[RMDB]
RNA sequence: GGGAACGACUCGAGUAGAGUCGAAAACUCCACUUCGGUGGAGACAUUAACCUUUGUGUCCCAAGGCUAUGAACUACUCCUAUCACCUUCCCAUUGGGAAGGUGUAAGGGAGCAUAGCCGACGGACACUCUGGUAAGUAGGAGCUUUCGAGCUCCAAAAUCUAGGUAGUGUUCGCACUACCUAGAUUAAAAGAAACAACAACAACAAC
Reactivity to 2A3 in 0.01 (KOAc 150mM, MgCl2 10mM, bicine 150mM(pH8.5), 24C), signal-to-noise 5, nucleotides 027 to 156: c000u000c000c010a010c000u060u060c270g100g000u010g000g020a030g020a020c030a100u270u270a090a050c000c000u010u010u030g000u000g000u020c000c010c010a020a010g000g000c000u010a000u010g030a090a120c030u150a110c010u300c020c010u080a110u250c010a010c020c010u000u000c030c000c030a300u130u300g000g000g000a000a000g000g010u000g000u000a030a010g000g000g000a000g000c000a000u000a000g000c000c000g000a000c000g000g000a000c000a010c000u000c000u000g010g000u020a010a060g070u110a080g030g000a010g000c000u090u140u220c300g110a010g000c000u010c000c020a030a040
Reactivity to DMS in 0.01 (KOAc 150mM, MgCl2 10mM, bicine 150mM(pH8.5), 24C), signal-to-noise 3, nucleotides 027 to 156: c000u000c000c020a030c010u000u010c230g110g070u000g000g010a010g020a050c080a030u000u000a110a040c020c000u000u010u010g020u000g020u000c010c020c020a080a300g030g010c010u000a020u000g020a130a150c060u010a180c010u000c010c020u060a300u010c000a010c010c000u000u000c000c000c000a300u020u010g030g020g020a010a000g030g000u000g000u000a010a190g000g020g010a050g000c000a020u010a030g010c010c000g010a190c300g000g000a000c000a000c000u000c020u000g000g020u000a070a090g020u010a170g010g000a020g000c000u010u000u010c180g010a090g000c000u010c000c000a010a050
The data come from the RNA Mapping Database (RMDB), library RNAMAK. This 207-nucleotide RNA was probed chemically with 2A3 and DMS. The reactions ran in a buffer of 150 mM KOAc, 10 mM MgCl2 and 150 mM bicine (pH 8.5), at 24 C. DMS adducts were read by reverse transcription with MarathonRT. For DMS, 5,109 sequencing reads were counted.